[RMDB]
RNA sequence: GGGAACGACUCGAGUAGAGUCGAAAACAUGGGACUUACAAAAUCUCUCAAUGCCUUGGCAGUCGGUUUGGCGUUUUUGUUCGUAGCGAUGAUGCUUUUCAUCUGACGCGACGUGAAGACCAAACGCGAACCAUUAGUCGUUCGCGACUAAUGGUUCAAAAGAAACAACAACAACAAC
Reactivity to DMS in 0.01 (KOAc 150mM, MgCl2 10mM, bicine 150mM(pH8.5), 24C), signal-to-noise 2, nucleotides 027 to 126: c100a120u000g000g010g000a030c110u000u000a100c240a080a070a090a070u010c050u000c030u000c080a050a090u000g020c000c010u010u000g080g000c040a050g010u010c100g030g000u010u000u010g010g020c080g000u000u000u000u000u000g000u010u000c020g010u000a070g000c300g000a060u020g000a020u010g010c300u020u000u000u000c000a020u000c000u000g010a200c080g000c010g010a010c000g010u000g000a060a050g000a070c000c000a020a030a030c030g000c190
Reactivity to 2A3 in 0.01 (KOAc 150mM, MgCl2 10mM, bicine 150mM(pH8.5), 24C), signal-to-noise 2, nucleotides 027 to 126: c020a090u100g000g030g000a020c010u130u110a010c250a010a160a040a130u030c020u010c000u000c050a070a100u040g030c010c030u020u060g100g000c070a030g050u120c060g080g040u020u020u020g040g000c090g050u020u030u010u000u230g120u100u000c030g020u030a030g030c020g030a020u010g020a010u060g140c140u220u060u040u080c000a000u040c010u010g030a010c040g000c030g010a000c020g030u090g070a030a000g060a040c010c000a050a030a010c060g030c040

Chemical mapping of a 177-nucleotide RNA with DMS and 2A3. DMS adducts were read by reverse transcription with MarathonRT. Source: RMDB library RFMREP, as collected in RNAgym. For DMS, 1,515 sequencing reads were counted.